Record summary: Chemical mapping of a 207-nucleotide RNA with 2A3. The reactions ran in a buffer of 150 mM KOAc, 10 mM MgCl2 and 150 mM bicine (pH 8.5), at 24 C. As a SHAPE reagent, 2A3 marks flexible, mostly unpaired nucleotides at the ribose 2'-OH. For 2A3, 526 sequencing reads were counted. Reactivities are given for positions 27 through 156.
[RMDB]
RNA sequence: GGGAACGACUCGAGUAGAGUCGAAAAACAGCGAAAGGCACAAGACUUCGAACAUUAUAGCAGUUAGUAGUUGCCUAAACCCAUUGCAAUAUAUGGGACAGUAGAGUUCGCAAGCCUAUACUGUGCGAAAAGUCGCAAGGUUUCGACCUUGCGACAAGGCUACCAAUAGGUUCGCCUAUUGGUAGCCAAAAGAAACAACAACAACAAC
Reactivity to 2A3 in 0.01 (KOAc 150mM, MgCl2 10mM, bicine 150mM(pH8.5), 24C), signal-to-noise 1, nucleotides 027 to 156: a000c060a050g110c030g060a100a000a000g030g040c020a030c020a000a060g070a040c030u060u100c160g110a220a140c110a250u300u220a080u150a180g000c040a000g050u040u130a090g030u120a070g010u030u030g030c000c000u030a080a070a020c020c000c000a020u020u090g000c000a000a000u000a000u000a000u140g030g030g000a000c010a000g080u100a040g000a000g140u000u020c060g010c030a100a000g010c000c010u080a090u060a020c010u010g000u030g000c000g070a130a000a100a000g000u000c000g090c040a000a000g040g000u010u050u110c150g020a050c000c000u000u000g000c000g000a010c000a000a000